[RMDB]
RNA sequence: GGGAACGACUCGAGUAGAGUCGAAAAACGCGCGCGCAUAAUAUAUGCGCGCUAUAUAAUAUAUGCGCGCGCGGCGAUAAUAUAUGCGAUAUAUCGCAUACGCGCGGCGUAUGCGGCGCGCAUACGCGAGCGUAAUGGGAUUCGUCCCAUUACGCUCAAAAGAAACAACAACAACAAC
Reactivity to 2A3 in 0.01 (KOAc 150mM, MgCl2 10mM, bicine 150mM(pH8.5), 24C), signal-to-noise 1, nucleotides 027 to 126: a020c030g000c000g020c020g010c000g000c000a000u050a120a010u060a100u020a020u080g020c040g000c000g010c050u010a000u000a000u000a000a030u050a000u000a000u010g000c000g000c020g000c010g000c000g000g000c030g020a050u090a300a090u120a040u020a040u170g060c000g040a010u030a010u020a040u300c030g000c010a000u020a040c040g050c000g070c160g270g010c000g010u000a010u020g010c020g010g060c010g040c000g010c010a000u030a020c050g030c040
Reactivity to DMS in 0.01 (KOAc 150mM, MgCl2 10mM, bicine 150mM(pH8.5), 24C), signal-to-noise 2, nucleotides 027 to 126: a110c010g000c010g010c000g030c010g030c000a020u000a090a060u000a100u000a020u010g030c020g020c060g020c020u000a010u000a020u000a100a130u000a160u010a020u000g010c020g020c010g030c000g050c030g000g010c080g010a080u000a080a050u000a090u000a050u000g020c040g010a130u000a090u010a060u010c000g010c000a000u000a000c020g040c010g020c160g010g010c000g010u000a010u000g010c020g000g010c090g010c020g020c010a030u000a010c070g010c090